[RMDB]
RNA sequence: GGGAACGACUCGAGUAGAGUCGAAAAAGGUGUAGGUUCGCCUACACCUAGCUCUCCUAAGUCCUCAUCGAUCUGCAUCGCGACGAUCAUGUCGGAAACGACAUGGGAGCGAUGGGGAGAGGAUAUGGAUCAACGCGCGAUCUUUCGAGAUCGCGAAGAGAUGAACUAAAUUCGUUUAGUUCAUCUCAAAAGAAACAACAACAACAAC
Reactivity to DMS in 0.01 (KOAc 150mM, MgCl2 10mM, bicine 150mM(pH8.5), 24C), signal-to-noise 3, nucleotides 027 to 156: a020g040g040u000g020u000a010g010g010u000u010c300g030c030c000u000a000c010a000c010c000u000a020g030c080u010c020u000c020c000u000a070a240g000u000c000c010u010c060a150u000c050g000a110u000c020u010g000c030a020u000c020g010c000g000a130c140g020a080u000c030a020u000g010u010c010g010g010a150a090a220c000g010a030c010a010u010g010g000g020a080g010c000g010a010u000g000g010g000g020a100g010a050g010g000a070u000a080u010g010g000a150u000c050a120a070c090g000c010g030c000g010a010u000c000u000u000u010c260g010a040g000a010u000c000g030c000g020a010a080
Reactivity to 2A3 in 0.01 (KOAc 150mM, MgCl2 10mM, bicine 150mM(pH8.5), 24C), signal-to-noise 9, nucleotides 027 to 156: a000g010g000u010g000u010a010g020g040u040u070c270g140c040c000u000a000c000a000c000c000u000a000g010c000u010c000u000c010c000u050a120a050g030u000c010c020u020c040a230u130c120g230a150u040c050u160g180c020a000u000c000g010c010g090a300c010g010a110u010c000a000u000g000u000c000g070g000a120a060a040c010g000a000c000a000u000g000g000g000a010g000c000g000a000u000g000g030g010g000a070g000a000g020g000a010u020a040u110g030g000a050u120c110a120a110c130g010c000g000c000g090a000u000c000u050u120u120c280g110a030g000a020u000c000g000c000g010a060a000
The record gives the reactivity of an RNA of 207 nucleotides to DMS and 2A3. For DMS the reverse transcriptase was MarathonRT. For DMS, 9,910 sequencing reads were counted. Values cover nucleotides 27 to 156. Source: RMDB library RNAMAK, as collected in RNAgym. Reactivities are rounded to 0.1 and cut off at 0 and 3.